Record summary:
An RNA of 177 nucleotides, treated with DMS and 2A3 and read out base by base. Conditions: 150 mM KOAc, 10 mM MgCl2 and 150 mM bicine (pH 8.5), 24 C.
RNA sequence: GGGAACGACUCGAGUAGAGUCGAAAAUAGCUGUGCCGCAAUAAAACCACAUGGAGGAGAUAUCCCACUUGAUAAUCUAUUUAUCUGGGCUCGAUUUCUGGCAGGGAGGCCAAAGAGAAAUUCUAACAAACUGUAGUCUCUUCGGAGACUACAGUUUAAAAGAAACAACAACAACAAC
Reactivity to DMS in 0.01 (KOAc 150mM, MgCl2 10mM, bicine 150mM(pH8.5), 24C), signal-to-noise 2, nucleotides 027 to 126: u010a110g000c030u000g000u000g000c040c030g000c090a070a090u000a060a010a090a130c060c000a060c050a080u000g000g000a060g000g000a130g030a070u010a050u010c020c010c020a120c170u040u000g000a030u010a030a080u000c150u040a050u010u010u000a030u000c000u010g000g000g030c070u020c030g000a170u020u020u010c040u000g000g000c070a080g010g010g000a080g010g040c060c070a010a050a070g010a110g020a100a100a050u020u010c010u010a070a140c190
Reactivity to 2A3 in 0.01 (KOAc 150mM, MgCl2 10mM, bicine 150mM(pH8.5), 24C), signal-to-noise 2, nucleotides 027 to 126: u120a040g040c090u080g000u050g040c000c010g040c000a020a020u110a140a130a040a050c000c030a070c040a060u070g000g010a030g090g000a030g030a040u040a130u140c000c000c000a010c020u020u060g040a000u010a150a000u040c140u190a170u040u280u000a050u020c010u070g010g010g020c000u000c010g040a040u030u100u080c030u080g050g020c040a000g080g000g000a070g060g000c000c010a010a060a000g120a010g070a010a040a030u060u010c000u020a040a090c020